[RMDB]
RNA sequence: GGGAACGACUCGAGUAGAGUCGAAAAAUGUCGAUGUCAAGUUAGAUAGCUCCUUUGGCACAUCGGAUACUAUCCUAUCUUCACCAUAGAUGCUCUGAGGGCACUGAUUUAGGUAACUGUGGAUGACAUAUAUCCGUGACUAGCUCACCCACGUCCAGUAUCACGUCGGCUUCGGCCGACGUGAUACAAAAGAAACAACAACAACAAC
Reactivity to 2A3 in 0.01 (KOAc 150mM, MgCl2 10mM, bicine 150mM(pH8.5), 24C), signal-to-noise 2, nucleotides 027 to 156: a000u130g000u040c000g020a040u030g010u060c020a040a030g040u070u080a090g050a180u080a040g010c050u060c040c000u070u050u060g040g000c080a030c010a120u080c060g000g000a000u040a190c030u080a040u040c000c000u030a010u040c050u150u100c050a100c060c030a060u020a080g110a120u060g010c000u010c080u130g050a090g000g000g070c040a000c000u020g030a110u040u040u160a040g060g000u080a120a040c050u070g030u050g060g040a040u060g030a020c020a020u140a000u010a030u060c040c020g010u030g000a040c060u010a020g000c020u030c010a020c020c010c000a080c090g040u000c020c000a010
Source: RMDB library OK3TST, as collected in RNAgym. This 207-nucleotide RNA was probed chemically with 2A3. 2A3 adducts were read by reverse transcription with SuperScript II with manganese. The reactions ran in a buffer of 150 mM KOAc, 10 mM MgCl2 and 150 mM bicine (pH 8.5), at 24 C. For 2A3, 681 sequencing reads were counted. Values cover nucleotides 27 to 156.